This 207-nucleotide RNA was probed chemically with 2A3 and DMS. 2A3 adducts were read by reverse transcription with SuperScript II with manganese. For 2A3, 6,652 sequencing reads were counted.
RNA sequence: GGGAACGACUCGAGUAGAGUCGAAAAACGGCGUAGUCGCGAUAGCAGCGUUCCGCUGUCGUCUCCACUGCAAGAACGUACGGUGUUGAGGCCCUGUCCGCCGCUGCGCUGCCACCUACUCUCGCGCCGCUAGUCGAGCGGACUCCGGGUGGAGCCCGCUACGGUUUAAGUUCGCUUAAACCGUAGCAAAAGAAACAACAACAACAAC
Reactivity to 2A3 in 0.01 (KOAc 150mM, MgCl2 10mM, bicine 150mM(pH8.5), 24C), signal-to-noise 6, nucleotides 027 to 156: a000c030g000g000c000g010u010a010g020u050c020g000c010g050a050u050a070g020c030a000g000c010g060u110u070c040c050g000c020u010g040u040c010g010u000c030u030c050c080a140c140u230g050c120a120a100g040a200a060c040g060u280a010c010g010g020u040g030u120u230g040a070g030g020c030c020c020u030g020u040c020c010g000c010c010g000c000u010g010c000g010c010u030g010c000c000a010c000c000u080a140c040u050c050u100c160g140c110g030c090c010g010c030u080a080g170u300c110g100a040g000c000g020g000a020c010u020c100c130g010g010g000u000g000g020a020g040c000c000c010
Reactivity to DMS in 0.01 (KOAc 150mM, MgCl2 10mM, bicine 150mM(pH8.5), 24C), signal-to-noise 1, nucleotides 027 to 156: a080c050g000g000c020g010u000a070g040u010c230g000c040g020a090u000a100g040c010a090g010c010g010u000u020c100c080g030c020u000g090u000c020g040u000c030u000c020c010a090c010u000g000c190a200a120g030a130a130c140g000u010a060c080g020g010u000g020u010u010g030a100g000g010c000c140c040u010g000u000c100c110g000c040c040g000c020u000g030c010g000c000u000g040c020c050a050c000c020u010a100c020u050c030u000c020g030c080g030c040c010g010c030u030a150g000u010c070g020a140g040c010g080g020a030c020u000c030c050g030g020g000u010g020g000a140g010c020c020c070